[RMDB]
RNA sequence: GGGAACGACUCGAGUAGAGUCGAAAACCCAGCCAGGGAUUGUCAUCCUCAAGUCUCUUGAUUUUCUUCCUUGUCUUCCGGAGGUCCCUCUCGAGUUCCUCUAACCUUUUUCUUCCAUUCACCCACUGCUCGAGAAUCUCUUCUCUUCCCUGGCGACCACAUCAUGAUGCUUCGGCAUCAUGAUGUGAAAAGAAACAACAACAACAAC
Reactivity to 2A3 in 0.01 (KOAc 150mM, MgCl2 10mM, bicine 150mM(pH8.5), 24C), signal-to-noise 2, nucleotides 027 to 156: c000c000c010a010g010c010c000a000g050g050g020a040u080u170g100u150c040a110u120c030c060u000c060a050a090g080u040c080u000c000u150u140g060a070u190u080u110u020c070u080u100c060c010u090u060g030u080c030u130u050c040c050g020g040a020g000g020u030c010c010c000u000c000u010c040g070a080g050u090u090c020c030u060c040u070a120a180c030c020u110u070u020u080u050c050u070u030c080c010a120u120u050c040a120c040c020c020a070c040u050g010c000u030c010g030a040g070a110a090u000c040u030c000u160u040c020u010c000u000u070c000c000c000u000g010g000c010g000a010c070

This 207-nucleotide RNA was probed chemically with 2A3. For 2A3, 1,026 sequencing reads were counted.